An RNA of 207 nucleotides, treated with DMS and 2A3 and read out base by base.
RNA sequence: GGGAACGACUCGAGUAGAGUCGAAAAAUCGUGCCGCAGGCGCUGCGCAACAUUCUGCGCACGCACCGCCAGGAGCUGCUCGACGCCGGGUACAGCCCCGAGGACGGCGGCUGGUUCACCCGCGAGGCUGUCAUGCGGGUGGCGCUGCUGCUGCGGCGCCACGAGAGACAUUCGUGUCUCUCGUGGCAAAAGAAACAACAACAACAAC
Reactivity to DMS in 0.01 (KOAc 150mM, MgCl2 10mM, bicine 150mM(pH8.5), 24C), signal-to-noise 1, nucleotides 027 to 156: a050u020c060g020u040g040c000c000g010c030a090g000g010c010g000c040u000g020c000g160c030a090a220c110a210u020u000c140u010g020c000g000c000a060c080g040c030a090c020c000g000c020c060a240g000g020a060g020c020u000g020c020u000c010g000a100c090g030c050c030g000g020g000u040a040c010a060g020c040c000c000c010g010a170g000g030a190c030g000g020c030g000g040c000u020g020g010u010u000c100a030c010c000c010g020c030g000a160g030g020c010u010g020u000c040a150u000g030c040g010g020g000u000g010g000c080g020c020u000g000c000u000g020c010u000g010c000g040g050c100
Reactivity to 2A3 in 0.01 (KOAc 150mM, MgCl2 10mM, bicine 150mM(pH8.5), 24C), signal-to-noise 4, nucleotides 027 to 156: a000u120c040g020u060g020c000c000g000c010a020g040g010c030g030c150u040g000c010g000c000a010a110c010a300u220u160c100u130g000c010g000c000a010c000g010c010a020c010c010g010c040c010a020g010g020a030g030c000u040g000c010u030c030g230a300c120g150c210c090g010g000g000u100a100c000a010g000c000c010c000c000g030a130g070g030a090c010g000g040c060g000g000c010u040g040g000u130u180c020a010c000c000c000g000c020g010a040g080g090c100u090g080u210c040a070u250g010c020g020g020g030u020g020g010c070g000c020u040g000c020u010g000c010u000g000c000g000g000c000
The data come from the RNA Mapping Database (RMDB), library OK3TST. The reactions ran in a buffer of 150 mM KOAc, 10 mM MgCl2 and 150 mM bicine (pH 8.5), at 24 C. 2A3 adducts were read by reverse transcription with SuperScript II with manganese.